This 177-nucleotide RNA was probed chemically with 2A3. Reactivities are given for positions 27 through 126.
[RMDB]
RNA sequence: GGGAACGACUCGAGUAGAGUCGAAAAGUGUUUCCUGACCGCACGCGAGUGGGGGGUGGCAGCUGAGAGGCACUUUUGUGUCGGCUUCUGGGCCACCUCUUGUGGGUGUGUGGGGACCUGUCAGAGUCCUUUGAGUUCGUUUCGACGAACUCAAAGGAAAAGAAACAACAACAACAAC
Reactivity to 2A3 in 0.01 (KOAc 150mM, MgCl2 10mM, bicine 150mM(pH8.5), 24C), signal-to-noise 2, nucleotides 027 to 126: g120u090g100u080u020u000c020c000u020g110a040c020c000g010c000a000c010g050c020g020a040g060u140g000g000g000g000g000g090u000g010g010c040a150g110c040u030g010a000g000a000g010g010c000a000c000u050u060u260u300g000u000g000u000c010g040g150c000u180u110c070u190g000g030g000c000c000a000c000c000u040c000u000u000g030u010g000g170g040u040g000u000g000u020g020g000g000g010a000c000c000u030g040u070c020a060g000a030g190u000
The 2A3 profile rests on 673 reads.
For 2A3 the reverse transcriptase was SuperScript II with manganese.